[RMDB]
Conditions: 150 mM KOAc, 10 mM MgCl2 and 150 mM bicine (pH 8.5), 24 C.
An RNA of 207 nucleotides, treated with DMS and 2A3 and read out base by base.
Values are in units of 0.01, from 0 to 300, in steps of 10.
Reactivities are given for positions 27 through 156.
For 2A3, 757 sequencing reads were counted.
For 2A3 the reverse transcriptase was SuperScript II with manganese.

RNA sequence: GGGAACGACUCGAGUAGAGUCGAAAAAAUGUCUGUGUCUGGAAGUGGAGAUACACAAGAUGGGUUGGUCCCCAUGGCUUUUUAUACCUCAACAAUUAUUUCAUCCAGUAGAUAUCUAUACUAACUUGAUUGUAAACAUUAAGUUUACAUGGGAUUACAUUAGCCCAUCAUUCGUGAUGGGCUAAUGAAAAGAAACAACAACAACAAC
Reactivity to DMS in 0.01 (KOAc 150mM, MgCl2 10mM, bicine 150mM(pH8.5), 24C), signal-to-noise 2, nucleotides 027 to 156: a080a060u010g000u000c000u000g020u010g030u010c040u000g050g010a110a130g020u010g020g020a070g000a070u000a070c060a090c140a090a100g000a120u000g020g020g030u000u000g030g030u000c090c010c020c030a070u000g010g040c030u010u000u000u000u010a040u000a080c010c020u000c070a050a090c060a060a110u000u000a100u000u000u000c030a090u000c020c070a110g010u000a120g020a110u000a060u000c070u010a120u000a090c090u000a070a120c060u000u000g020a060u010u000g010u000a020a030a060c050a130u000u000a050a110g020u000u010u010a020c010a040u000g000g000g010a140u020u000a170
Reactivity to 2A3 in 0.01 (KOAc 150mM, MgCl2 10mM, bicine 150mM(pH8.5), 24C), signal-to-noise 2, nucleotides 027 to 156: a000a050u130g010u000c030u010g010u010g040u010c000u000g070g090a120a110g060u110g060g090a030g010a020u130a060c060a000c040a020a060g020a010u030g000g000g000u020u090g040g030u090c030c030c000c000a010u020g040g000c040u140u060u040u100u100a110u100a070c000c060u100c090a090a100c030a150a090u120u070a110u080u300u100c020a030u000c010c020a000g000u010a000g120a150u070a030u170c070u170a100u030a230c000u040a160a120c030u050u050g040a040u060u050g040u030a000a000a000c000a020u130u180a160a120g020u030u080u000a000c000a000u000g100g000g020a110u100u060a040